RNA sequence: GGGAACGACUCGAGUAGAGUCGAAAAGAAGAGCAGGCAGAUAAUCUUGUGCAGUAUGCAUGCUCGUAUCUCCACACGAAGAAAGGCAGCAAAAGAAUAACUGCCACUGCACAAGUGGAGCCGCAGAAUGACUAGCGGUAUUCGUACCGCUAGUCAUAAAAGAAACAACAACAACAAC
Reactivity to 2A3 in 0.01 (KOAc 150mM, MgCl2 10mM, bicine 150mM(pH8.5), 24C), signal-to-noise 4, nucleotides 027 to 126: g070a030a000g040a000g020c030a060g040g000c040a000g040a200u160a130a090u150c000u020u020g010u010g000c010a000g030u150a030u150g030c060a020u070g010c000u010c000g000u000a060u010c070u020c020c000a050c010a000c070g090a050a080g060a120a030a030g000g000c000a010g000c010a080a010a050a090g170a110a130u190a080a020c000u000g000c000c000a010c010u020g000c000a000c000a000a000g010u000g010g030a030g010c010c000g040c080a030g080a120
Reactivity to DMS in 0.01 (KOAc 150mM, MgCl2 10mM, bicine 150mM(pH8.5), 24C), signal-to-noise 3, nucleotides 027 to 126: g010a120a060g020a060g010c000a040g030g010c000a090g000a150u010a120a130u000c000u000u010g020u010g000c010a020g020u020a080u010g010c080a060u000g010c040u000c000g000u020a030u000c060u000c000c070a120c180a080c240g000a100a040g010a080a110a060g000g000c000a000g010c130a080a070a150a180g040a160a110u010a130a150c000u000g000c000c010a250c010u000g000c000a010c020a010a000g010u000g000g030a050g030c020c030g000c120a090g000a210

About this RNA
Structure probing data (2A3 and DMS) for a 177-nucleotide construct. For 2A3 the reverse transcriptase was SuperScript II with manganese. The reactions ran in a buffer of 150 mM KOAc, 10 mM MgCl2 and 150 mM bicine (pH 8.5), at 24 C.